[RMDB]
RNA sequence: GGGAACGACUCGAGUAGAGUCGAAAAGACAUGAGUCUCAACACAUCUGAAUGUGUUGUACAUACUGUUCUGACUACGAUAUGUACAGUGUGUACAGCUACACAGCGAGACUCAUCGUAGUCAGAUAGCUAGACCAAGAUUUCGAUCUUGGUCUAGCAAAAGAAACAACAACAACAAC
Reactivity to 2A3 in 0.01 (KOAc 150mM, MgCl2 10mM, bicine 150mM(pH8.5), 24C), signal-to-noise 1, nucleotides 027 to 126: g060a000c000a000u000g000a000g000u000c000u000c010a060a010c000a000c000a060u030c070u200g120a220a030u000g010u000g000u030u000g000u000a020c000a000u000a000c020u000g010u030u020c010u030g020a000c020u050a050c050g040a040u000a040u040g010u010a000c030a010g060u000g000u000g000u020a010c020a050g070c040u040a000c000a000c000a040g080c010g000a000g000a000c040u000c010a000u000c010g000u020a000g000u000c000a000g000a020u000a000
Reactivity to DMS in 0.01 (KOAc 150mM, MgCl2 10mM, bicine 150mM(pH8.5), 24C), signal-to-noise 2, nucleotides 027 to 126: g000a040c040a040u000g020a020g010u010c020u000c010a130a030c060a050c060a020u000c280u000g000a200a070u000g000u000g000u000u000g020u000a000c000a000u000a060c300u030g010u000u000c000u020g050a040c010u000a030c090g000a010u000a020u000g000u000a000c000a140g010u000g000u000g030u030a050c230a080g040c110u000a000c000a000c030a000g010c080g010a010g000a000c000u000c000a040u000c050g000u000a000g000u000c010a000g000a180u040a050